[RMDB]
The data come from the RNA Mapping Database (RMDB), libraries RFM100 and RFMREP. The record gives the reactivity of an RNA of 177 nucleotides to 2A3 and DMS. The RNA was probed in 150 mM KOAc, 10 mM MgCl2 and 150 mM bicine (pH 8.5) at 24 C. 2A3 adducts were read by reverse transcription with SuperScript II with manganese.
RNA sequence: GGGAACGACUCGAGUAGAGUCGAAAAGCCGGGCGGGCUCGGGGCGGCCGGGACGAGGAGGGGCGACGACGAGCUGCGAGCAAAGAUGUGCCCCGGGACCCCCGGCACCUUCCAGUGGAUUUCCUUGCUACUGCAUAAAAUUCGUUUUAUGCAGUAGAAAAGAAACAACAACAACAAC
Reactivity to 2A3 in 0.01 (KOAc 150mM, MgCl2 10mM, bicine 150mM(pH8.5), 24C), signal-to-noise 9, nucleotides 027 to 126: g000c010c000g000g000g010c140g010g010g000c000u000c000g000g000g000g000c010g020g010c150c040g020g010g020a040c070g000a060g030g040a130g020g040g020g100c070g020a060c040g030a020c040g030a050g050c040u080g040c090g060a080g020c050a050a100a040g070a080u130g040u120g030c000c000c000c010g000g000g000a040c000c000c000c000c010g000g000c000a000c000c000u030u040c020c010a070g030u080g090g050a190u010u020u020c010c000u010u050g020
Reactivity to DMS in 0.01 (KOAc 150mM, MgCl2 10mM, bicine 150mM(pH8.5), 24C), signal-to-noise 4, nucleotides 027 to 126: g010c000c000g000g000g010c180g030g010g020c010u000c000g010g020g000g050c000g010g020c110c070g000g000g010a110c090g010a140g000g020a140g010g010g000g020c030g010a080c080g010a080c080g010a090g000c040u010g010c050g010a120g010c080a080a110a110g000a110u020g000u030g010c000c000c000c000g000g000g000a020c010c010c000c020c010g010g000c030a000c010c040u010u000c030c030a140g010u000g000g020a180u010u000u000c030c020u000u010g020